[RMDB]
RNA sequence: GGGAACGACUCGAGUAGAGUCGAAAAGAUAUGGAUGGACCCUGCGAAACUAGGUCGUUGAAAUCGGAAACGAUGGAGACCUAGUAGUAGCAGCCAUCCUAAGUCAAAAGGGGUCUUCGGACCCCAAGUCAGUUAUAUGGUUCGCCAUAUAACUGACAAAAGAAACAACAACAACAAC
Reactivity to DMS in 0.01 (KOAc 150mM, MgCl2 10mM, bicine 150mM(pH8.5), 24C), signal-to-noise 4, nucleotides 027 to 126: g000a040u000a300u000g000g010a020u000g000g000a140c150c300c020u010g010c010g000a190a210a130c000u000a020g000g010u000c000g010u000u020g000a070a140a020u000c010g010g000a150a080a160c000g010a010u000g000g000a110g010a010c000c000u000a010g000u000a010g000u010a140g000c000a010g000c000c010a010u000c000c000u000a010a050g000u000c050a070a020a080a090g010g000g010g000u010c010u000u000c190g040g000a020c000c010c000c000a000a010
Reactivity to 2A3 in 0.01 (KOAc 150mM, MgCl2 10mM, bicine 150mM(pH8.5), 24C), signal-to-noise 2, nucleotides 027 to 126: g010a030u070a020u130g010g000a000u010g030g000a100c170c070c050u020g000c020g020a020a000a010c000u000a000g020g010u010c050g120u280u060g030a020a020a000u010c000g000g050a100a030a040c020g000a010u020g000g000a020g000a000c010c000u000a000g000u000a000g000u000a000g000c000a000g010c000c010a000u000c000c000u010a090a020g060u040c040a000a000a050a180g000g000g000g000u000c010u050u040c130g130g000a000c000c000c000c000a000a000
Annotation: The record gives the reactivity of an RNA of 177 nucleotides to DMS and 2A3.